[RMDB]
RNA sequence: GGGAACGACUCGAGUAGAGUCGAAAACGAUCGCGUGUAGUACAUACAUGGCUCGUAUCACAUGCGCACUCAGCCAUGAGCUAGGCGACUAGGAUCACUAGGGAUCAGAUGCGAUGACUCAUGCGCCAGAUUGGCACAGUUUCGACUGUGCCAAUCUAAAAGAAACAACAACAACAAC
Reactivity to 2A3 in 0.01 (KOAc 150mM, MgCl2 10mM, bicine 150mM(pH8.5), 24C), signal-to-noise 2, nucleotides 027 to 126: c040g030a120u140c030g020c030g000u030g070u080a060g000u040a090c020a070u100a010c020a070u110g060g000c030u010c070g050u020a020u090c050a020c020a110u150g010c040g000c030a100c100u080c090a020g000c010c010a070u110g020a010g000c020u000a040g030g110c020g090a080c020u040a030g010g140a110u080c050a070c160u130a090g130g020g080a040u050c020a010g050a200u170g010c040g040a020u000g020a010c000u020c010a010u010g040c030g000c060c030
Reactivity to DMS in 0.01 (KOAc 150mM, MgCl2 10mM, bicine 150mM(pH8.5), 24C), signal-to-noise 2, nucleotides 027 to 126: c110g000a060u000c070g000c010g000u000g020u000a040g030u000a060c180a120u020a070c060a040u010g030g020c130u010c090g000u000a030u000c050a080c060a090u000g000c080g020c130a180c130u000c090a050g010c000c010a080u000g000a080g000c010u000a060g020g010c060g000a070c020u000a090g000g020a090u000c050a130c110u020a060g020g020g000a070u000c080a120g010a070u010g010c000g030a080u010g010a100c020u000c030a040u000g000c140g010c070c110